Chemical mapping of a 177-nucleotide RNA with DMS and 2A3. For DMS, 2,437 sequencing reads were counted. Source: RMDB library OK2TST, as collected in RNAgym. Conditions: 150 mM KOAc, 10 mM MgCl2 and 150 mM bicine (pH 8.5), 24 C.

[RMDB]
RNA sequence: GGGAACGACUCGAGUAGAGUCGAAAACGGCAGUCAGGCUGCUCGAGAGGGUGCCGGCGAGGGUCGCUUCAGCGUCUUGCGUUUCGUUUUGUGGACGGGCCCGCUGCCACGCCCACCACGCCGCCGCGCUGAGCAUAUGGUUCGCCAUAUGCUCAGCAAAAGAAACAACAACAACAAC
Reactivity to DMS in 0.01 (KOAc 150mM, MgCl2 10mM, bicine 150mM(pH8.5), 24C), signal-to-noise 2, nucleotides 027 to 126: c100g010g000c020a060g010u010c180a130g000g020c030u010g000c020u000c060g010a130g020a180g040g000g020u000g020c090c050g020g030c020g000a120g010g010g030u000c050g000c090u000u020c150a160g000c040g020u000c040u020u020g020c100g020u010u000u000c050g020u000u000u030u010g020u000g030g020a080c070g020g000g000c050c040c090g000c110u000g010c020c030a130c050g020c010c000c000a110c020c080a050c090g030c080c040g010c050c120g000c130
Reactivity to 2A3 in 0.01 (KOAc 150mM, MgCl2 10mM, bicine 150mM(pH8.5), 24C), signal-to-noise 2, nucleotides 027 to 126: c020g030g000c000a010g050u140c040a050g070g000c020u030g000c000u010c020g070a090g020a020g000g060g000u060g110c080c050g020g020c050g030a090g010g030g010u080c020g000c030u200u170c050a040g010c000g050u040c030u040u130g100c040g060u060u110u100c030g020u030u070u150u240g080u090g010g030a020c040g000g000g020c020c020c010g030c030u030g000c010c010a000c020g000c010c030c010a000c010c020a060c000g020c010c030g000c040c000g020c020